[RMDB]
RNA sequence: GGGAACGACUCGAGUAGAGUCGAAAACAGCUGUUCCUGGCCUAGGGAGGAGCCAGAACCCCCAACCAAUAGUUCUGAGGAUGGUGAUGCGAGCCUUGGGUCCUCCCUAACUUGGCUACUGUGUUACAGAAGCGAUAUCCAAGGCAGUGUCAUCUGACUAGGUAAUAUCAUUCGUGAUAUUACCUAGAAAAGAAACAACAACAACAAC
Reactivity to DMS in 0.01 (KOAc 150mM, MgCl2 10mM, bicine 150mM(pH8.5), 24C), signal-to-noise 3, nucleotides 027 to 156: c060a140g010c030u000g000u000u000c080c030u010g020g020c020c040u000a150g010g010g020a090g020g060a150g010c010c050a040g020a050a100c030c010c020c020c040a070a280c080c060a080a150u010a140g000u010u000c090u000g020a170g030g010a170u010g010g030u000g010a050u010g020c050g010a150g070c020c000u010u010g010g020g020u010c010c020u000c000c000c010u010a020a020c060u000u000g020g020c020u000a100c050u000g010u000g020u000u010a150c060a120g020a080a110g030c040g000a200u010a030u010c000c000a020a040g020g020c010a170g010u000g010u010c020a040u000c020u000g010a270
Reactivity to 2A3 in 0.01 (KOAc 150mM, MgCl2 10mM, bicine 150mM(pH8.5), 24C), signal-to-noise 3, nucleotides 027 to 156: c040a020g110c110u130g040u080u070c050c000u000g010g000c000c010u040a110g010g000g000a000g010g010a000g020c010c000a030g020a040a040c050c030c000c050c010a030a030c050c000a080a040u100a100g040u070u050c030u090g030a040g110g040a080u150g030g000u010g010a000u010g000c010g030a060g000c010c000u010u000g000g010g000u000c000c000u000c010c000c010u010a030a040c030u020u050g120g010c000u030a030c010u030g010u010g110u300u250a040c000a010g030a000a000g020c010g020a040u020a010u040c000c000a000a000g000g000c000a010g010u010g030u010c020a000u000c010u020g050a090
Chemical mapping of a 207-nucleotide RNA with DMS and 2A3. Reactivities are given for positions 27 through 156. The RNA was probed in 150 mM KOAc, 10 mM MgCl2 and 150 mM bicine (pH 8.5) at 24 C. For 2A3 the reverse transcriptase was SuperScript II with manganese. The DMS profile rests on 5,990 reads.